[RMDB]
RNA sequence: GGGAACGACUCGAGUAGAGUCGAAAAGGGGAGAAGCCAGUGUCCCAGUCCAGCCGCCUUUCUGCCAGACACUUGCGAGUGUUCCCUGGAGCACAGCGGGUGAAUUGCUGACACGAGGCAUGCUGUGGUCAUUCAAACCAUUCGUGGUUUGAAUGACAAAAGAAACAACAACAACAAC
Reactivity to 2A3 in 0.01 (KOAc 150mM, MgCl2 10mM, bicine 150mM(pH8.5), 24C), signal-to-noise 3, nucleotides 027 to 126: g040g030g040g000a200g030a110a040g090c010c030a040g040u000g040u060c010c000c000a000g080u030c010c020a010g020c020c030g040c000c000u060u080u050c040u070g040c010c000a000g010a020c010a000c020u010u030g020c010g080a210g070u010g020u010u040c030c010c120u190g190g000a010g000c020a000c000a010g010c010g010g070g000u010g060a070a140u120u090g060c020u030g000a020c010a000c080g020a040g000g000c020a040u100g010c010u050g040u120g140
Reactivity to DMS in 0.01 (KOAc 150mM, MgCl2 10mM, bicine 150mM(pH8.5), 24C), signal-to-noise 3, nucleotides 027 to 126: g010g000g010g000a110g000a120a130g000c040c040a090g010u000g000u000c030c130c010a190g000u010c080c020a010g000c020c300g010c030c010u000u000u010c060u000g010c020c020a040g010a160c010a030c010u000u010g000c010g000a090g020u000g000u000u000c010c030c130u000g020g010a040g010c030a010c090a300g000c030g000g000g000u010g010a080a100u010u010g000c040u010g000a040c040a040c130g000a050g000g010c000a070u010g010c030u000g020u000g010